This 177-nucleotide RNA was probed chemically with 2A3. For 2A3 the reverse transcriptase was SuperScript II with manganese. Conditions: 150 mM KOAc, 10 mM MgCl2 and 150 mM bicine (pH 8.5), 24 C.
[RMDB]
RNA sequence: GGGAACGACUCGAGUAGAGUCGAAAAUUGACAACUACGACAGCUUCGUGUUCAACCUGGUGCAGUACCUCGGCCAGCUCGGCAUCGAGGCCGAGGUGUGGCGCAACGACGACCACCGGCUAUCCGACAGCUGUGCUGCGUUCGCGCAGCACAGCUGAAAAGAAACAACAACAACAAC
Reactivity to 2A3 in 0.01 (KOAc 150mM, MgCl2 10mM, bicine 150mM(pH8.5), 24C), signal-to-noise 1, nucleotides 027 to 126: u170u100g030a020c020a050a100c090u130a060c020g130a020c000a040g070c040u050u060c010g080u000g050u060u100c000a020a060c000c000u110g020g020u010g050c000a000g040u060a000c000c000u000c010g000g000c000c000a090g120c050u010c070g060g000c010a300u300c030g040a110g020g000c020c000g000a000g000g000u000g020u000g000g000c060g000c000a030a050c000g130a040c000g060a100c000c070a030c000c000g020g000c000u050a040u150c020c000g080a120